[RMDB]
RNA sequence: GGGAACGACUCGAGUAGAGUCGAAAACUGUCCUUCGGCUGCGCCAGCUACCUGGUGACCAGGCCCGAAGGGAACGUCCUCGUAGACGUGCCCCGCUUCGUGCCCAAGCUGCUCAAGCGCAUCCAGGGUGAAUGGGGAGGUUCGCCUCCCCAUUCACAAAAGAAACAACAACAACAAC
Reactivity to DMS in 0.01 (KOAc 150mM, MgCl2 10mM, bicine 150mM(pH8.5), 24C), signal-to-noise 2, nucleotides 027 to 126: c120u030g010u000c000c000u020u010c100g030g010c040u010g010c000g020c000c030a040g010c160u010a110c160c030u000g010g010u010g030a110c160c110a110g000g000c030c080c040g000a080a070g010g020g000a050a010c030g010u000c010c020u020c270g020u010a140g000a020c020g010u000g010c110c030c000c120g010c040u000u010c110g000u000g010c000c010c030a120a050g020c060u000g000c060u000c070a160a180g010c030g000c050a040u000c000c020a070g020g000
Reactivity to 2A3 in 0.01 (KOAc 150mM, MgCl2 10mM, bicine 150mM(pH8.5), 24C), signal-to-noise 1, nucleotides 027 to 126: c020u060g090u110c010c000u050u100c080g020g000c000u050g000c020g020c000c020a020g000c010u010a100c070c010u130g000g040u130g170a180c080c020a010g060g000c020c070c000g020a020a000g000g030g000a040a010c010g000u010c000c020u180c100g070u220a050g000a000c010g000u020g060c000c010c000c010g010c040u040u000c020g030u040g020c000c050c010a040a010g030c030u050g000c000u050c080a090a030g000c000g000c030a010u030c000c000a020g090g040

The data come from the RNA Mapping Database (RMDB), library OK2TRN. Structure probing data (DMS and 2A3) for a 177-nucleotide construct. For DMS the reverse transcriptase was MarathonRT. The 2A3 profile rests on 1,647 reads. The reactions ran in a buffer of 150 mM KOAc, 10 mM MgCl2 and 150 mM bicine (pH 8.5), at 24 C. Values cover nucleotides 27 to 126.